[RMDB]
RNA sequence: GGGAACGACUCGAGUAGAGUCGAAAAUGUGUCUCCUUCGGGAGACACAAACGCUCGCAGCCCGAGGCCGCACGGGCAAGGCUGCGGCCAGCCAGCGAGCUAUGUGUUAUCAAUUCGUUGAUAACAACAUUACAUAACCUUUCGAGGUUAUGUAAUGAAAAGAAACAACAACAACAAC
Reactivity to DMS in 0.01 (KOAc 150mM, MgCl2 10mM, bicine 150mM(pH8.5), 24C), signal-to-noise 9, nucleotides 027 to 126: u010g010u000g010u000c000u000c000c000u000u010c210g030g010g010a010g010a000c000a000c000a000a070a080c230g000c000u000c000g020c000a150g000c010c020c020g000a090g000g010c000c010g010c020a050c090g010g020g020c220a080a090g000g010c150u000g010c020g000g000c010c000a060g000c070c090a210g010c010g000a010g010c010u000a020u010g010u000g000u000u000a010u000c000a010a040u000u010c180g010u000u000g010a010u000a000a000c000a050a180
Reactivity to 2A3 in 0.01 (KOAc 150mM, MgCl2 10mM, bicine 150mM(pH8.5), 24C), signal-to-noise 3, nucleotides 027 to 126: u060g000u000g000u000c000u010c010c000u020u090c190g090g000g000a000g000a000c000a000c000a000a000a000c030g000c000u010c000g000c010a020g030c000c000c020g040a060g000g000c010c000g040c020a020c060g080g140g020c070a050a060g130g000c110u010g000c000g010g000c010c000a010g030c020c020a010g010c010g000a000g000c030u080a150u140g150u010g000u010u010a000u000c010a020a030u080u070c240g050u060u020g000a000u000a000a000c000a000a000
Structure probing data (DMS and 2A3) for a 177-nucleotide construct. For DMS the reverse transcriptase was MarathonRT. The DMS profile rests on 29,284 reads.